[RMDB]
RNA sequence: GGGAACGACUCGAGUAGAGUCGAAAAGAUAUGGAACGCUGAUAGACAUGAAUGGACAUCGGAAACGAUGUAGAGUUCAACAGCUAUAGCGUUCCUAAGUCAAAAUCCGUCAAGUUCGCUUGACGGACUCCAUUGGUGGGUUCGCCCACCAAUGGAGAAAAGAAACAACAACAACAAC
Reactivity to DMS in 0.01 (KOAc 150mM, MgCl2 10mM, bicine 150mM(pH8.5), 24C), signal-to-noise 1, nucleotides 027 to 126: g020a000u000a100u020g000g000a020a030c000g020c000u020g000a070u000a010g010a030c110a150u000g020a020a020u010g010g000a050c000a000u000c010g020g010a040a030a050c010g000a030u000g010u000a030g010a300g030u020u000c010a090a110c190a120g000c000u000a000u000a010g020c000g000u000u000c000c000u020a000a070g000u000c030a060a080a090a240u000c000c000g000u000c010a020a000g030u000u010c270g010c000u010u020g020a030c000g020g010a020
Reactivity to 2A3 in 0.01 (KOAc 150mM, MgCl2 10mM, bicine 150mM(pH8.5), 24C), signal-to-noise 2, nucleotides 027 to 126: g010a010u020a000u000g020g000a050a000c000g040c000u080g120a060u020a000g110a030c220a300u300g010a000a000u070g090g050a000c020a000u000c000g020g050a030a000a000c000g030a010u010g020u030a050g080a030g120u030u000c090a300a210c130a300g030c000u000a010u020a010g040c010g020u000u000c010c000u000a010a000g000u000c010a080a000a070a240u000c010c000g000u000c000a000a020g020u090u240c290g050c230u000u000g000a000c020g000g000a020
Background: Chemical mapping of a 177-nucleotide RNA with DMS and 2A3. The DMS profile rests on 1,108 reads. Conditions: 150 mM KOAc, 10 mM MgCl2 and 150 mM bicine (pH 8.5), 24 C. For DMS the reverse transcriptase was MarathonRT.